Source information: Structure probing data (DMS) for a 177-nucleotide construct. DMS adducts were read by reverse transcription with MarathonRT. The RNA was probed in 150 mM KOAc, 10 mM MgCl2 and 150 mM bicine (pH 8.5) at 24 C. Source: RMDB library OK1LIB, as collected in RNAgym.
[RMDB]
RNA sequence: GGGAACGACUCGAGUAGAGUCGAAAAACGCAGCAAAGGCCGAGGAGGCACCACCAAGGGGUGCGUUGGUCGAGGCAGACACUGCCAAGAACUUCGACUUUGGGCUGCGUGACAGCUUCGGCGUGCCAGGAUGAGCUAGGUUCGCCUAGCUCAUCCUAAAAGAAACAACAACAACAAC
Reactivity to DMS in 0.01 (KOAc 150mM, MgCl2 10mM, bicine 150mM(pH8.5), 24C), signal-to-noise 1, nucleotides 027 to 126: a000c000g000c100a000g030c000a180a010a070g040g000c050c000g040a080g000g000a160g000g000c040a000c000c000a110c040c070a050a090g000g020g000g030u000g000c050g010u000u020g000g020u050c000g030a300g020g000c030a070g000a300c300a210c050u000g020c000c000a050a160g000a110a170c000u000u000c070g000a040c000u000u000u000g000g000g020c040u040g040c010g040u010g000a020c040a160g000c050u030u050c040g000g030c050g010u000g000c010c070